[RMDB]
RNA sequence: GGGAACGACUCGAGUAGAGUCGAAAACAUCGCGGAAAUUACGGAGAAAUUUGCGGCCCGGAUUGCACCGAUUAAAACCGAUAUUGAAACCCUUUCAAAAGGCGUUCAGGGAUGGUGUGAAGCGAACGUUAAUGGUUGGUUUCGACCAACCAUUAACAAAAGAAACAACAACAACAAC
Reactivity to DMS in 0.01 (KOAc 150mM, MgCl2 10mM, bicine 150mM(pH8.5), 24C), signal-to-noise 2, nucleotides 027 to 126: c080a090u020c010g010c010g000g000a190a050a110u010u010a100c120g000g010a180g020a080a050a150u010u010u000g020c070g000g020c040c020c010g020g010a080u000u000g010c010a040c010c010g000a130u020u000a030a080a050a060c030c020g000a090u000a140u000u000g010a050a030a040c090c000c000u000u000u000c300a050a120a120a040g000g000c140g010u000u000c030a060g020g000g020a080u010g000g010u000g030u000g010a050a050g000c070g000a070a060c200
Reactivity to 2A3 in 0.01 (KOAc 150mM, MgCl2 10mM, bicine 150mM(pH8.5), 24C), signal-to-noise 1, nucleotides 027 to 126: c000a030u070c010g000c030g130g020a030a140a080u120u110a130c030g010g090a090g080a060a130a050u200u110u120g060c040g060g000c010c070c000g000g010a000u020u140g000c000a000c040c010g080a130u140u210a030a090a040a050c000c000g070a080u110a180u150u090g080a070a080a090c000c000c030u040u000u090c200a190a150a000a010g010g040c100g020u050u020c090a000g000g000g110a010u100g020g050u000g020u040g030a010a000g070c050g040a010a010c070
Notes: An RNA of 177 nucleotides, treated with DMS and 2A3 and read out base by base. Values cover nucleotides 27 to 126. 2A3 adducts were read by reverse transcription with SuperScript II with manganese. For DMS the reverse transcriptase was MarathonRT.